[RMDB]
RNA sequence: GGGAACGACUCGAGUAGAGUCGAAAAUGUCAUUUGGAGGUUUACCAAAAACUAGCACCUCUUGGCACAUGUUCAAGAUCAUCUCUUGGCAGUUGCUAAAGGAGGGGAAGGGAGAUGAUUCCUUGACAGAGAGCUGAAGGCCCACAGACACAGGCAAAAUCGGUAAUAGUUUCGACUAUUACCGAUUAAAAGAAACAACAACAACAAC
Reactivity to DMS in 0.01 (KOAc 150mM, MgCl2 10mM, bicine 150mM(pH8.5), 24C), signal-to-noise 4, nucleotides 027 to 156: u000g030u000c030a150u000u000u000g020g010a110g040g030u000u000u020a200c050c060a090a050a070a090a110c070u000a090g020c050a070c010c010u000c020u000u000g030g020c010a060c080a100u000g010u000u000c030a000a030g010a070u000c200a140u020c300u000c020u000u000g010g020c030a080g000u000u000g010c020u020a060a090a070g020g010a060g000g020g000g020a080a090g000g010g000a060g010a090u000g020a170u000u000c030c010u010u010g000a070c040a110g010a110g010a080g020c040u000g010a070a080g000g010c010c010c020a050c060a070g010a110c050a080c040a070g000g030c060a070a070
Reactivity to 2A3 in 0.01 (KOAc 150mM, MgCl2 10mM, bicine 150mM(pH8.5), 24C), signal-to-noise 4, nucleotides 027 to 156: u100g020u020c030a060u040u040u100g040g000a040g020g010u090u070u130a110c030c030a080a070a050a030a020c070u070a030g050c040a060c010c000u030c010u040u020g010g000c000a020c020a090u060g010u240u280c010a020a000g000a030u040c020a050u020c060u000c000u070u000g000g000c010a020g020u070u090g000c000u050a160a030a080g060g010a020g020g010g010g010a020a070g040g010g000a070g010a010u100g010a010u080u060c020c000u020u020g000a000c030a020g070a010g010a010g040c060u060g020a070a010g060g010c010c030c000a040c010a010g060a010c020a000c010a040g060g010c000a080a110
Annotation
Chemical mapping of a 207-nucleotide RNA with DMS and 2A3. For 2A3, 4,440 sequencing reads were counted. 2A3 adducts were read by reverse transcription with SuperScript II with manganese.